[RMDB]
This 207-nucleotide RNA was probed chemically with DMS and 2A3. Values cover nucleotides 27 to 156. Conditions: 150 mM KOAc, 10 mM MgCl2 and 150 mM bicine (pH 8.5), 24 C. For 2A3, 1,169 sequencing reads were counted. The DMS profile rests on 1,772 reads.

RNA sequence: GGGAACGACUCGAGUAGAGUCGAAAAUCACAGAUUGUGUUACAGAUUAAGACCAUGCUGGAUGGUCACGUUGGAGACUGCAUGUGGCAGUCUUGAAACGUGUGGUUUGACGUCUAACCAUUAUAGCAGUGGGUGGAGUACUGCAAAGAUGUCACCGUAUCAUACGGUCCUUCGGGACCGUAUGAUAAAAAGAAACAACAACAACAAC
Reactivity to DMS in 0.01 (KOAc 150mM, MgCl2 10mM, bicine 150mM(pH8.5), 24C), signal-to-noise 1, nucleotides 027 to 156: u000c060a090c080a080g010a160u000u000g000u000g000u000u010a100c030a300g010a150u000u010a170a060g010a100c080c030a040u020g060c060u000g030g000a060u000g040g000u000c030a010c020g010u000u040g010g000a050g060a050c020u010g040c030a200u000g030u000g030g030c040a000g030u000c010u010u020g010a050a010a010c030g060u010g000u000g000g030u010u010u000g020a070c030g020u010c010u000a030a120c030c020a080u010u000a190u000a100g020c020a060g100u000g000g040g020u000g030g000a160g020u000a110c020u000g000c040a140a120a040g010a060u020g010u010c000a190c070c010g000
Reactivity to 2A3 in 0.01 (KOAc 150mM, MgCl2 10mM, bicine 150mM(pH8.5), 24C), signal-to-noise 2, nucleotides 027 to 156: u070c030a050c030a070g140a140u180u120g040u000g010u070u140a040c030a000g070a110u180u130a110a000g020a010c010c000a020u100g010c080u100g110g090a040u010g010g030u040c020a010c000g010u000u000g030g010a000g000a000c010u000g020c020a160u170g040u090g300g010c000a000g000u000c000u000u010g000a010a020a000c000g000u000g010u040g060g000u010u010u150g020a000c000g030u000c010u020a060a040c000c010a030u090u070a100u150a060g000c010a000g010u040g000g070g070u160g000g040a130g040u170a020c000u000g030c000a020a000a010g000a000u010g020u030c010a000c070c040g030